Chemical mapping of a 207-nucleotide RNA with 2A3 and DMS.
For 2A3 the reverse transcriptase was SuperScript II with manganese.
[RMDB]
RNA sequence: GGGAACGACUCGAGUAGAGUCGAAAACCCGCCCGUUCCAAGUUGCGUAGUGGACCGCCUGGGGCCUAUGCGAAAGCUGGGCCUCACGGUCCAUAAUGUGGCAGGCACAGCGUGAGGCUGGCUUCACAGAGCAGCGACAACUGCCCGCUUCCAACGGCAUAUGAGAAUUCUUCGGAAUUCUCAUAUGAAAAGAAACAACAACAACAAC
Reactivity to 2A3 in 0.01 (KOAc 150mM, MgCl2 10mM, bicine 150mM(pH8.5), 24C), signal-to-noise 3, nucleotides 027 to 156: c000c000c010g000c000c000c000g030u060u000c070c030a060a050g000u020u030g020c020g040u100a040g040u060g000g000a000c000c010g100c050c090u020g000g000g000g020c010c000u140a180u300g000c010g050a090a020a000g000c010u000g000g000g000c000c000u000c000a000c000g000g010u000c000c000a000u000a000a000u020g010u020g030g000c040a050g030g020c070a070c000a300g040c040g090u240g180a050g250g000c000u000g030g030c000u070u080c040a040c010a030g030a010g020c020a010g020c020g140a060c060a100a060c020u020g020c000c010c000g020c000u040u000c040c010a040a030c020g010g010
Reactivity to DMS in 0.01 (KOAc 150mM, MgCl2 10mM, bicine 150mM(pH8.5), 24C), signal-to-noise 2, nucleotides 027 to 156: c000c010c010g000c040c030c020g060u000u010c030c020a070a300g040u000u000g010c000g000u000a250g040u010g010g010a020c010c000g030c010c080u020g030g010g030g040c000c010u000a050u010g080c010g000a140a120a160g000c020u000g010g020g020c000c000u000c010a010c040g020g030u000c010c000a000u000a000a060u010g000u000g000g030c100a060g030g010c060a090c080a070g030c050g000u000g010a160g020g050c020u000g000g020c050u000u000c060a070c060a100g010a100g020c030a110g020c040g000a070c070a060a070c030u000g050c000c000c020g000c010u000u000c040c020a030a060c040g010g010
It was measured as part of the RMDB library ARCHII. The RNA was probed in 150 mM KOAc, 10 mM MgCl2 and 150 mM bicine (pH 8.5) at 24 C.